Chemical mapping of a 177-nucleotide RNA with DMS.

RNA sequence: GGGAACGACUCGAGUAGAGUCGAAAAUGUUAUUUGAUCAUGCAUUAGGGCUGUAUGAUCUAAAAUUAGCCCUUUUAAUUGCCCAGCAGUCUCAAAAAGAUCCUCGUGAAUAUGUCCCAUUUUUACACUAUCCCGGGAUAUUCGUAUCCCGGGAUAGAAAAGAAACAACAACAACAAC
Reactivity to DMS in 0.01 (KOAc 150mM, MgCl2 10mM, bicine 150mM(pH8.5), 24C), signal-to-noise 1, nucleotides 027 to 126: u000g020u000u010a100u000u010u000g000a040u000c000a000u000g010c010a010u020u000a130g000g040g010c190u000g020u000a000u000g010a020u010c020u000a040a030a080a080u000u010a180g020c020c010c020u010u010u020u000a070a180u000u020g000c020c010c010a070g000c030a080g010u010c040u010c060a010a080a060a160a150g000a040u000c000c030u010c060g010u010g000a100a030u010a080u000g010u000c000c000c020a100u000u030u000u070u000a100c180a190

Values cover nucleotides 27 to 126. DMS (dimethyl sulfate) methylates the pairing face of unpaired adenines and cytosines. Conditions: 150 mM KOAc, 10 mM MgCl2 and 150 mM bicine (pH 8.5), 24 C. For DMS, 862 sequencing reads were counted.